Chemical mapping of a 177-nucleotide RNA with DMS. Source: RMDB library OK2TRN, as collected in RNAgym. The reactions ran in a buffer of 150 mM KOAc, 10 mM MgCl2 and 150 mM bicine (pH 8.5), at 24 C.
RNA sequence: GGGAACGACUCGAGUAGAGUCGAAAAAGCUGCUCGCAAUCGCGCCAAAGGACCGGCGUAGCGCGCGGAGCUAACUGCUUAGGUUGCAAAAAUAGGUCCUUUAUGGAGCAGCCAUAGCAGAUUUACAAUUACUGACGCGAUUCGUCGCGUCAGUAAUAAAAGAAACAACAACAACAAC
Reactivity to DMS in 0.01 (KOAc 150mM, MgCl2 10mM, bicine 150mM(pH8.5), 24C), signal-to-noise 1, nucleotides 027 to 126: a160g010c000u000g000c000u000c000g030c090a150a140u020c280g020c000g000c000c000a070a120a090g010g010a000c000c010g010g030c010g000u000a050g030c250g000c050g000c120g020g020a110g030c050u000a080a110c020u000g000c000u000u020a300g000g010u010u000g000c000a010a070a000a040a040u010a070g020g010u000c000c000u000u000u000a060u000g080g060a190g000c000a020g000c000c020a180u000a060g000c070a060g040a130u000u050u030a130c060a180